[RMDB]
RNA sequence: GGGAACGACUCGAGUAGAGUCGAAAACUCGAAAGAGACCUGCAUAUCUUAGGCAGAUAAACAAGUCAGGUCUGAAAAGCGAAAGCCCUAAGAUAUGCAGCUGUGAAGACUUGACGCAGAACACACAAUUUACUCCUACGUUCGCGUAGGAGUAAAUAAAAGAAACAACAACAACAAC
Reactivity to 2A3 in 0.01 (KOAc 150mM, MgCl2 10mM, bicine 150mM(pH8.5), 24C), signal-to-noise 5, nucleotides 027 to 126: c000u000c010g020a040a020a010g030a010g050a080c000c010u000g020c000a000u000a000u000c000u000u000a000g000g020c020a010g050a220u190a050a190a010c040a090a000g020u020c030a030g140g010u010c010u020g040a150a150a030a020g070c050g060a050a010a010g060c000c010c000u000a000a000g000a000u000a000u000g000c000a020g010c010u050g030u060g080a070a040g000a020c000u010u010g010a010c000g000c030a020g080a190a020c040a010c010a000c020a150
Reactivity to DMS in 0.01 (KOAc 150mM, MgCl2 10mM, bicine 150mM(pH8.5), 24C), signal-to-noise 4, nucleotides 027 to 126: c000u010c000g010a110a150a120g000a020g000a180c230c000u000g000c010a010u000a000u000c000u000u010a000g000g030c030a180g000a040u040a090a100a090c180a050a100g000u000c020a100g000g020u000c000u000g000a080a060a110a100g010c140g000a080a040a050g010c070c000c000u000a010a010g000a000u010a010u000g000c000a000g010c060u020g000u010g010a140a040g000a000c010u000u010g020a130c000g000c140a110g020a110a080c110a070c150a070c230a040
Source information:
Structure probing data (2A3 and DMS) for a 177-nucleotide construct. DMS adducts were read by reverse transcription with MarathonRT. It was measured as part of the RMDB library OK1LIB. In probing experiments dimethyl sulfate is read out at A N1 and C N3, which are open when not base-paired. The RNA was probed in 150 mM KOAc, 10 mM MgCl2 and 150 mM bicine (pH 8.5) at 24 C.